[RMDB]
RNA sequence: GGGAACGACUCGAGUAGAGUCGAAAAUUGUGACUAAUAACAAAUAUGAAAUCUAUGGUCGAGCAUACUGUUUAUAUGAUAAUUUUUCUGCUUACAUUGCGUGUUCCGCUUUUAAUGAAAUGCUUAACAACAGACUCACACGUGGAGUUAUUGCACAGCACAUUCUAUAUUUCGAUAUAGAAUGUGCAAAAGAAACAACAACAACAAC
Reactivity to DMS in 0.01 (KOAc 150mM, MgCl2 10mM, bicine 150mM(pH8.5), 24C), signal-to-noise 3, nucleotides 027 to 156: u000u000g020u000g020a240c070u000a100a130u000a100a140c040a100a160a100u000a050u000g010a110a120a080u000c040u000a050u020g030g010u000c110g010a130g010c000a040u000a070c070u000g010u010u000u010a060u010a070u020g010a080u020a040a120u010u000u000u000u000c020u020g000c030u010u000a070c080a080u000u010g020c040g000u000g020u000u000c040c050g010c120u010u000u000u000a070a120u000g010a070a050a080u000g010c040u010u000a040a070c050a050a050c030a050g010a090c100u000c030a080c040a060c080g050u000g010g020a270g010u010u000a020u000u000g000c020a060c080a300
Reactivity to 2A3 in 0.01 (KOAc 150mM, MgCl2 10mM, bicine 150mM(pH8.5), 24C), signal-to-noise 8, nucleotides 027 to 156: u070u050g020u030g050a080c040u110a030a050u040a100a010c040a020a130a070u240a110u170g070a090a120a070u030c030u050a050u070g040g000u050c070g010a010g020c040a060u090a130c030u030g060u080u130u080a150u050a040u130g070a070u070a200a140u090u080u040u060u070c050u050g040c010u030u040a040c020a110u030u070g000c010g010u060g070u150u050c030c000g000c070u050u060u030u140a090a080u080g030a040a020a030u080g010c020u080u090a080a020c050a010a000c000a020g050a160c000u010c020a020c000a000c050g060u110g030g010a050g010u020u010a030u040u050g010c010a020c000a030